[RMDB]
Description: This 177-nucleotide RNA was probed chemically with 2A3 and DMS. Reactivities are rounded to 0.1 and cut off at 0 and 3. The 2A3 profile rests on 5,723 reads. It was measured as part of the RMDB library OK2TRN. The reactions ran in a buffer of 150 mM KOAc, 10 mM MgCl2 and 150 mM bicine (pH 8.5), at 24 C.
RNA sequence: GGGAACGACUCGAGUAGAGUCGAAAAGACGUGCUCGGCAUCCGUCCUUACCUGAUCACGUCGAACGGCGCGCGCGUGCACGGGCCGGACGACACGCGGAUCCACGCGCAGGACGUGCCCGCCGACACUACCAUGAUGCUUUCGAGCAUCAUGGUAGAAAAGAAACAACAACAACAAC
Reactivity to 2A3 in 0.01 (KOAc 150mM, MgCl2 10mM, bicine 150mM(pH8.5), 24C), signal-to-noise 3, nucleotides 027 to 126: g050a020c060g020u040g030c070u020c020g010g000c010a040u040c020c020g030u000c010c010u070u100a090c000c030u040g010a050u060c030a010c090g000u000c010g010a060a010c000g020g010c050g000c010g000c010g000c040g230u150g040c070a030c050g030g050g000c020c010g010g020a030c000g020a030c000a020c110g060c080g050g030a080u040c080c040a100c070g010c010g000c040a010g030g050a010c030g020u080g010c010c040c010g000c010c000g010a010c010a020
Reactivity to DMS in 0.01 (KOAc 150mM, MgCl2 10mM, bicine 150mM(pH8.5), 24C), signal-to-noise 4, nucleotides 027 to 126: g000a110c160g010u000g010c150u000c020g000g040c050a250u010c050c020g000u010c010c010u000u000a220c140c030u000g000a050u020c030a100c120g020u000c000g000a020a280c080g020g020c020g020c060g030c050g010c080g040u000g020c030a080c000g020g000g000c010c010g000g010a260c030g000a120c080a070c140g050c130g000g000a080u000c080c100a130c100g000c040g000c200a070g000g010a070c050g010u000g020c070c060c060g000c040c000g010a100c090a100